This 207-nucleotide RNA was probed chemically with 2A3 and DMS. The reactions ran in a buffer of 150 mM KOAc, 10 mM MgCl2 and 150 mM bicine (pH 8.5), at 24 C. Reactivities are given for positions 27 through 156.

RNA sequence: GGGAACGACUCGAGUAGAGUCGAAAACAAACAGUUUCGACUGUUUGAAAAAGCGUACUACUUGUCAGCCACAAUGAUGCGUUCUCCCCACCUCCCAAAUAGGAGAGGAACGUUGAGUGGGCAAGUAUCGCAAAAAACACCAACUUCGGUUGGUGAAUCCUAAUCUGGUAUUCGUACCAGAUUAGGAAAAAGAAACAACAACAACAAC
Reactivity to 2A3 in 0.01 (KOAc 150mM, MgCl2 10mM, bicine 150mM(pH8.5), 24C), signal-to-noise 4, nucleotides 027 to 156: c010a000a000a000c010a010g000u020u060u190c130g160a020c010u020g050u030u020u030g060a100a020a010a010a000g020c040g030u120a080c060u000a010c000u040u030g030u100c110a090g180c090c000a040c030a130a300u150g030a030u080g030c000g000u000u010c060u120c020c000c030c000a080c000c040u060c030c030c010a070a250a090u230a070g000g020a040g000a010g070g040a020a000c000g000u040u070g040a010g030u010g000g000g010c000a000a000g020u010a010u250c030g000c010a080a030a000a000a000a070c010a000c030c000a010a010c010u020u020c150g170g000u000u000g000g000u000g020a010a070
Reactivity to DMS in 0.01 (KOAc 150mM, MgCl2 10mM, bicine 150mM(pH8.5), 24C), signal-to-noise 3, nucleotides 027 to 156: c010a000a010a020c000a030g000u000u000u010c200g020a080c000u000g010u000u010u010g000a060a060a100a120a170g010c020g020u000a110c150u000a010c010u010u010g020u000c040a260g030c030c030a030c010a140a100u010g010a090u010g000c040g010u000u000c010u000c100c020c000c050a170c110c020u000c020c160c130a060a120a160u010a110g000g020a070g000a300g010g000a020a000c010g000u000u000g010a070g000u010g010g000g010c020a010a030g010u000a020u000c040g000c040a000a050a080a100a070a140c000a030c000c000a020a010c010u000u020c280g060g020u010u000g030g050u000g000a010a070